An RNA of 177 nucleotides, treated with 2A3 and DMS and read out base by base.
For 2A3 the reverse transcriptase was SuperScript II with manganese.
The data come from the RNA Mapping Database (RMDB), library OK2TRN.
For DMS, 11,101 sequencing reads were counted.
The reactions ran in a buffer of 150 mM KOAc, 10 mM MgCl2 and 150 mM bicine (pH 8.5), at 24 C.
[RMDB]
RNA sequence: GGGAACGACUCGAGUAGAGUCGAAAAGCUGCUUACGUAUAUACUUUUGUGAUUUCUGAAGGCCUUGGUGCUGGGCAGGCUUCUCAUUCUGAACCGAGAGGAUGGGAGAGGAAGCCAGUGGGUAACAACUGCUAAUUAUUUUCGAAUAAUUAGCAGUAAAAGAAACAACAACAACAAC
Reactivity to 2A3 in 0.01 (KOAc 150mM, MgCl2 10mM, bicine 150mM(pH8.5), 24C), signal-to-noise 5, nucleotides 027 to 126: g030c020u040g000c020u100u080a050c040g090u040a070u030a010u040a200c030u140u160u150u090g080u070g090a140u040u130u060c030u030g050a090a030g040g000c020c030u090u100g080g030u110g040c030u040g000g060g000c020a030g030g030c000u040u010c020u020c010a050u040u000c010u040g110a180a130c020c050g050a080g000a000g200g010a030u070g020g000g000a060g000a020g040g010a040a010g010c000c000a020g040u080g020g040g000u020a040a020c020a020
Reactivity to DMS in 0.01 (KOAc 150mM, MgCl2 10mM, bicine 150mM(pH8.5), 24C), signal-to-noise 7, nucleotides 027 to 126: g010c050u010g000c040u000u010a070c080g010u000a060u000a090u010a100c050u000u000u000u000g020u000g000a120u000u000u000c040u010g010a100a130g010g010c050c040u010u000g020g020u000g020c040u000g000g010g020c060a110g010g010c030u000u000c010u000c040a140u000u010c020u010g010a110a170c080c040g000a160g000a110g000g010a050u000g010g000g000a030g010a210g000g010a040a080g010c020c020a050g030u000g010g010g000u010a060a060c160a090